An RNA of 207 nucleotides, treated with DMS and 2A3 and read out base by base. Source: RMDB library OK3TST, as collected in RNAgym. Reactivities are given for positions 27 through 156. The reactions ran in a buffer of 150 mM KOAc, 10 mM MgCl2 and 150 mM bicine (pH 8.5), at 24 C.

RNA sequence: GGGAACGACUCGAGUAGAGUCGAAAAGUGCACACCUCCCCUCCUUCGGAGGCCCUCUGUCCCUCCUCCCCAUCGCCCAGCGUGAGCGAACAUCCCUUAUCGCCGUGGGCUUAAGGGUUGUGGCCAUACCUGUCAGAGGAAAGAGGACAGCGGCUCAGCCUGAUAUCAAUUUCGAUUGAUAUCAGGCAAAAGAAACAACAACAACAAC
Reactivity to DMS in 0.01 (KOAc 150mM, MgCl2 10mM, bicine 150mM(pH8.5), 24C), signal-to-noise 2, nucleotides 027 to 156: g020u000g010c040a130c090a140c030c020u000c010c040c000c120u000c030c050u000u000c090g000g050a050g000g020c030c000c010u000c070u000g020u000c020c000c000u000c030c030u000c000c000c030c050a140u000c080g020c020c020c000a140g040c070g040u000g000a080g000c020g030a100a090c070a120u000c020c010c000u000u000a060u000c110g030c010c020g030u000g040g040g020c010u000u000a020a060g020g020g020u000u010g020u000g000g000c000c060a110u000a170c060c010u000g000u000c030a160g000a050g040g000a050a070a100g000a130g010g020a040c010a090g020c300g010g000c030u000c060a300
Reactivity to 2A3 in 0.01 (KOAc 150mM, MgCl2 10mM, bicine 150mM(pH8.5), 24C), signal-to-noise 2, nucleotides 027 to 156: g110u150g000c080a070c010a090c120c010u030c000c030c030c020u100c030c040u110u080c050g030g020a030g000g040c020c020c010u050c000u000g020u040c000c000c030u010c030c020u050c040c030c000c000a080u130c070g030c000c020c000a020g000c090g060u120g050a000g000c030g000a030a000c010a020u050c000c000c000u050u050a060u040c070g010c010c020g140u240g160g080g000c020u020u030a020a010g010g000g020u020u010g020u030g030g000c050c040a080u130a120c030c000u050g030u090c050a030g010a030g040g060a050a260a000g030a010g000g010a000c000a000g000c010g040g000c000u010c050a000